This 177-nucleotide RNA was probed chemically with 2A3 and DMS. 2A3 adducts were read by reverse transcription with SuperScript II with manganese. The RNA was probed in 150 mM KOAc, 10 mM MgCl2 and 150 mM bicine (pH 8.5) at 24 C.

RNA sequence: GGGAACGACUCGAGUAGAGUCGAAAAGAAGAGCAGGCAGAUAAUCUUGUGCAGUAUGCAUGCUCCUAACUCCACAAGAAGAAAGGCAGCAAAAGAAUAACUGCCACUGCACAAGUGGAGCCGCAGACCUGGGUGGGUGAUUCGUCACCCACCCAGGAAAAGAAACAACAACAACAAC
Reactivity to 2A3 in 0.01 (KOAc 150mM, MgCl2 10mM, bicine 150mM(pH8.5), 24C), signal-to-noise 2, nucleotides 027 to 126: g160a060a000g070a000g000c110a070g000g000c020a000g000a270u170a190a140u050c000u000u000g000u000g000c000a000g030u070a030u230g000c020a000u030g000c020u020c000c000u000a010a010c010u010c010c040a110c100a070a030g190a150a030g050a080a080a000g000g040c090a000g000c040a030a090a000a090g220a060a110u110a120a020c000u030g010c040c000a000c000u000g000c010a000c000a030a010g000u000g000g040a000g000c010c010g010c080a000g000a110
Reactivity to DMS in 0.01 (KOAc 150mM, MgCl2 10mM, bicine 150mM(pH8.5), 24C), signal-to-noise 1, nucleotides 027 to 126: g000a050a300g000a030g000c020a000g050g000c000a020g080a010u030a190a180u000c000u000u000g000u000g000c060a000g000u000a030u110g000c060a160u000g000c000u000c000c000u000a000a290c230u030c000c000a160c280a190a060g000a220a180g100a300a000a060g000g060c020a000g000c140a000a100a110a180g160a150a090u000a130a150c050u000g000c000c060a080c020u020g010c060a080c000a000a020g000u000g000g000a080g000c070c000g000c060a050g000a080